[RMDB]
This 177-nucleotide RNA was probed chemically with 2A3 and DMS.

RNA sequence: GGGAACGACUCGAGUAGAGUCGAAAAGAGAUGUGAAUGAUGAAAAGACAACAAUCACAAUGGAAGUCAUCAACUGGAUUUAUUUUAGCUAGUGCGGGUUCUGCAAUCGGUCUUGGUGCCAUGUGGAAAACACGCGGAUAUUCGUAUCCGCGUGUUUAAAAGAAACAACAACAACAAC
Reactivity to 2A3 in 0.01 (KOAc 150mM, MgCl2 10mM, bicine 150mM(pH8.5), 24C), signal-to-noise 3, nucleotides 027 to 126: g020a000g050a070u130g010u000g080a050a120u090g030a060u070g110a060a030a060a130g130a050c030a080a000c000a010a180u080c040a010c000a080a030u140g080g020a090a090g120u010c000a030u000c030a090a140c050u030g120g040a110u090u110u000a120u020u130u180u070a030g000c030u010a010g040u090g050c040g000g000g040u080u040c040u060g010c000a030a090u070c020g000g000u000c030u070u070g110g000u050g000c030c000a030u070g020u130g020g020a000
Reactivity to DMS in 0.01 (KOAc 150mM, MgCl2 10mM, bicine 150mM(pH8.5), 24C), signal-to-noise 2, nucleotides 027 to 126: g010a070g020a080u020g050u010g010a030a040u040g030a050u020g000a090a120a080a090g030a170c120a010a150c140a060a140u030c050a120c100a000a130u010g030g010a080a060g020u020c050a010u020c020a060a070c070u000g010g000a040u000u010u010a000u000u010u000u040a140g000c030u020a040g020u000g000c120g000g000g000u000u000c000u000g010c020a050a060u020c080g000g020u000c030u040u010g020g010u010g020c000c000a010u000g020u000g020g010a110
DMS adducts were read by reverse transcription with MarathonRT. It was measured as part of the RMDB library OK1LIB.